[RMDB]
RNA sequence: GGGAACGACUCGAGUAGAGUCGAAAAAAGGUCGUGUGUAACUCGGUGUACGGGUUCACGGGAGUGCAGCACGGACUCCUGCCGUGCCUGCACGUUGCCGCGACGGUGACGACCAUCGGCCGCGAGACUCACCAUGGUUAUUCGUAACCAUGGUGAGAAAAGAAACAACAACAACAAC
Reactivity to DMS in 0.01 (KOAc 150mM, MgCl2 10mM, bicine 150mM(pH8.5), 24C), signal-to-noise 2, nucleotides 027 to 126: a080a090g000g000u000c000g020u000g010u000g000u050a020a020c000u000c010g000g000u070g010u070a080c000g010g000g000u000u010c010a030c020g000g000g000a080g030u000g000c020a030g000c010a010c000g010g000a110c110u020c120c110u010g020c000c000g020u000g000c120c040u000g000c000a010c000g010u010u000g020c060c020g000c040g000a130c020g000g010u000g000a030c060g010a100c040c000a050u010c040g000g010c040c010g020c010g000a180g010a230
Reactivity to 2A3 in 0.01 (KOAc 150mM, MgCl2 10mM, bicine 150mM(pH8.5), 24C), signal-to-noise 5, nucleotides 027 to 126: a000a030g070g010u030c030g020u020g010u020g060u130a010a010c010u010c030g060g000u180g140u220a080c010g000g010g020u040u050c010a010c020g040g030g020a130g000u020g000c010a020g000c010a020c030g010g020a090c080u100c040c070u120g090c000c000g000u020g000c070c000u000g000c000a010c010g000u010u100g030c000c000g020c000g020a020c010g000g020u020g020a040c040g030a030c000c040a010u040c010g010g020c100c000g000c000g030a040g030a050